Chemical mapping of a 207-nucleotide RNA with DMS and 2A3. High DMS reactivity at an A or C suggests that its Watson-Crick edge is free. The 2A3 profile rests on 4,485 reads. For DMS the reverse transcriptase was MarathonRT. The DMS profile rests on 11,814 reads. The RNA was probed in 150 mM KOAc, 10 mM MgCl2 and 150 mM bicine (pH 8.5) at 24 C. 2A3 adducts were read by reverse transcription with SuperScript II with manganese.
[RMDB]
RNA sequence: GGGAACGACUCGAGUAGAGUCGAAAAGAAGCCUCACUUACAUGAAAGCUGAAGUGCUUUCUUUUGGGUGGGAUACACUUAAAUCUGACUUGUGUUGCAUUAACAUGUAUUGCCCCUUAGUUAGCCCUACUCAAUUAUGUCUUUGCUUAUGUGCCAAUCGUAAAUUAUAUUUCGAUAUAAUUUACGAAAAAGAAACAACAACAACAAC
Reactivity to DMS in 0.01 (KOAc 150mM, MgCl2 10mM, bicine 150mM(pH8.5), 24C), signal-to-noise 3, nucleotides 027 to 156: g030a100a090g010c040c000u000c030a030c050u000u000a110c100a080u000g010a030a020a040g020c020u010g010a140a180g040u000g020c010u000u000u000c010u000u000u000u010g010g010g040u010g000g020g020a150u000a030c050a050c020u010u010a070a090a110u010c070u000g010a090c060u000u000g020u010g020u000u010g010c070a100u010u010a070a110c120a070u000g020u000a080u000u010g010c010c010c000c010u000u000a070g010u010u000a120g000c020c010c010u000a040c040u000c020a050a090u010u010a080u000g000u010c030u010u000u010g000c020u010u010a110u000g020u010g000c040c020a070a300
Reactivity to 2A3 in 0.01 (KOAc 150mM, MgCl2 10mM, bicine 150mM(pH8.5), 24C), signal-to-noise 6, nucleotides 027 to 156: g090a030a000g020c010c010u020c000a020c000u040u070a020c010a100u090g040a040a020a000g010c050u070g110a180a050g150u110g070c000u040u060u000c000u060u030u050u020g030g010g010u030g020g010g010a040u100a060c100a020c010u070u130a040a100a140u090c050u050g060a050c040u080u090g010u030g020u090u070g010c020a030u050u060a090a080c030a110u100g060u130a110u040u170g070c000c000c000c000u020u020a030g020u020u040a020g050c010c020c000u030a040c020u030c070a030a080u120u070a060u170g030u020c040u030u090u010g040c010u090u090a080u140g060u050g030c020c010a030a080